Chemical mapping of a 177-nucleotide RNA with DMS. The reactions ran in a buffer of 150 mM KOAc, 10 mM MgCl2 and 150 mM bicine (pH 8.5), at 24 C. For DMS the reverse transcriptase was MarathonRT.
RNA sequence: GGGAACGACUCGAGUAGAGUCGAAAACUGGAUUCUUUCGAGAAUCCAGCAUGUCUAGUCGCUAGCGAACGAUCAACGCUAGCGACUAGACUUUAUUGAUGGCAUUUGCCUCUUUCGAGAGGCAAAAGUACAUUUGCUGGUUCGCCAGCAAAUGUACAAAAGAAACAACAACAACAAC
Reactivity to DMS in 0.01 (KOAc 150mM, MgCl2 10mM, bicine 150mM(pH8.5), 24C), signal-to-noise 2, nucleotides 027 to 126: c000u000g000g000a010u000u000c000u000u010u000c180g010a020g020a030a010u000c010c000a010g000c110a040u000g010u000c000u000a010g000u000c000g000c000u000a000g020c000g000a110a090c210g010a130u010c170a130a080c000g000c000u000a000g010c010g000a000c000u000a000g010a000c000u000u020u000a050u020u000g000a140u010g000g000c130a160u010u000u000g000c000c000u000c000u000u000u000c160g020a010g020a020g010g000c000a000a000a000a070
Background:
The DMS profile rests on 2,002 reads.